[RMDB]
RNA sequence: GGGAACGACUCGAGUAGAGUCGAAAAGAUAUGGAUCCCUCUACCCACCCCAUCCAUGUUCUCCCCACCGUUCUAAUCGGAAACGAUUAUGAACGAGGAACAUGGAUGGGAGGAGGGAUCCUAAGUCGAUUUCUUAGAGGUUCGCCUCUAAGAAAUCAAAAGAAACAACAACAACAAC
Reactivity to 2A3 in 0.01 (KOAc 150mM, MgCl2 10mM, bicine 150mM(pH8.5), 24C), signal-to-noise 2, nucleotides 027 to 126: g110a070u300a290u300g000g010a030u010c010c160c000u000c020u120a300c030c010c020a040c020c010c000c000a000u000c010c010a000u000g010u000u000c060u130c050c000c000c020a040c000c000g000u010u020c000u010a010a000u010c000g050g110a140a020a020c000g000a000u000u030a100u300g000a000a010c000g000a020g010g010a000a020c000a000u000g000g000a010u000g000g010g010a010g000g000a010g010g020g010a000u000c010c010u000a010a010g140u140c050
Reactivity to DMS in 0.01 (KOAc 150mM, MgCl2 10mM, bicine 150mM(pH8.5), 24C), signal-to-noise 2, nucleotides 027 to 126: g040a180u020a240u010g000g010a000u020c000c000c000u000c000u010a070c010c030c040a300c080c010c000c000a000u000c000c010a000u000g020u010u000c060u000c110c020c000c010a300c100c000g030u000u010c010u030a010a020u010c000g000g010a120a170a180c000g020a000u000u000a020u020g000a020a010c010g010a100g000g010a030a010c000a030u000g000g000a000u000g000g020g010a010g000g010a030g000g010g000a000u020c000c000u000a010a110g030u010c120

This 177-nucleotide RNA was probed chemically with 2A3 and DMS. For DMS the reverse transcriptase was MarathonRT. For DMS, 1,295 sequencing reads were counted. Reactivities are given for positions 27 through 126.